[RMDB]
RNA sequence: GGGAACGACUCGAGUAGAGUCGAAAAGAAUUUAUAGAAAGAACAGUGGUUUAGGCGUAUAUAUGUGCGACUUUAAGAAUGAUACUUGCAGUGGUAUCUAUGAAGAUAGGCAGGCUAUCAUAGAAAGAAGAUGAAUAAUAUUCGUAUUAUUCAUCUUAAAAGAAACAACAACAACAAC
Reactivity to DMS in 0.01 (KOAc 150mM, MgCl2 10mM, bicine 150mM(pH8.5), 24C), signal-to-noise 9, nucleotides 027 to 126: g000a100a060u030u020u030a080u020a090g010a070a070a090g010a070a080c100a080g020u000g010g010u010u000u010a060g000g010c030g010u010a010u010a070u030a050u030g000u010g010c040g010a100c040u010u010u010a060a090g010a100a040u000g000a030u000a020c010u000u000g010c050a120g020u020g010g020u010a020u000c000u000a080u020g010a070a040g010a030u000a030g000g000c020a020g000g010c240u000a000u010c020a020u010a080g000a090a070a080g010
Reactivity to 2A3 in 0.01 (KOAc 150mM, MgCl2 10mM, bicine 150mM(pH8.5), 24C), signal-to-noise 5, nucleotides 027 to 126: g040a030a070u120u240u100a220u100a110g120a040a130a030g060a080a020c060a060g070u050g110g000u080u070u100a020g010g010c020g030u040a030u010a010u000a040u210g030u020g020c030g010a040c040u030u070u050a040a020g050a030a020u050g010a000u010a020c010u010u050g010c050a050g040u110g180g030u030a010u000c000u030a130u150g110a030a040g010a030u020a010g000g040c020a010g020g000c030u030a030u050c000a010u020a040g100a020a040a010g070

About this RNA: Structure probing data (DMS and 2A3) for a 177-nucleotide construct. DMS adducts were read by reverse transcription with MarathonRT. The reactions ran in a buffer of 150 mM KOAc, 10 mM MgCl2 and 150 mM bicine (pH 8.5), at 24 C. The DMS profile rests on 48,364 reads. In probing experiments dimethyl sulfate is read out at A N1 and C N3, which are open when not base-paired.